The record gives the reactivity of an RNA of 207 nucleotides to DMS and 2A3.
For DMS the reverse transcriptase was MarathonRT.
[RMDB]
RNA sequence: GGGAACGACUCGAGUAGAGUCGAAAAAGACGGAAACCCAUCGACUGUCACCAGAUGCUGCAUCACCUGAUCACUGAUGGCUCAACGGUAUCCGGCGGUACAACCGAAUACUUGUAGCUGCCUUUUGAAAAGGAGUUCAUCUUCGGAUGAACUCCAACUCCUCAAUUUACUUCGGUAAAUUGAGGAGAAAAGAAACAACAACAACAAC
Reactivity to DMS in 0.01 (KOAc 150mM, MgCl2 10mM, bicine 150mM(pH8.5), 24C), signal-to-noise 1, nucleotides 027 to 156: a070g010a130c040g010g000a140a090a140c060c040c030a140u000c040g040a140c030u010g000u010c030a090c020c020a050g000a070u000g030c020u000g000c070a120u000c050a040c080c000u000g020a150u000c020a140c140u040g000a050u000g010g070c060u000c030a100a060c070g000g020u000a020u000c000c010g010g000c000g060g060u000a170c190a110a020c000c010g040a040a030u010a020c020u000u000g020u000a040g020c000u000g100c000c100u000u000u000u000g000a020a060a190a180g010g030a030g030u000u040c000a000u000c010u010u010c300g060g000a040u000g000a000a010c000u010c010c010a020a050
Reactivity to 2A3 in 0.01 (KOAc 150mM, MgCl2 10mM, bicine 150mM(pH8.5), 24C), signal-to-noise 4, nucleotides 027 to 156: a000g050a010c060g040g010a050a080a070c030c010c010a040u050c050g080a070c020u030g010u050c020a010c030c000a040g020a080u090g020c050u020g000c050a040u050c020a060c030c020u070g030a050u080c040a040c090u070g020a030u080g070g000c020u030c060a070a060c060g000g010u010a040u020c030c020g000g010c030g050g060u130a050c060a060a070c050c030g070a050a020u050a100c050u050u150g050u100a030g030c020u030g010c000c000u060u090u110u150g110a100a110a050a040g010g000a010g000u000u010c000a000u000c000u050u070c130g040g000a000u000g000a000a010c000u000c000c000a000a000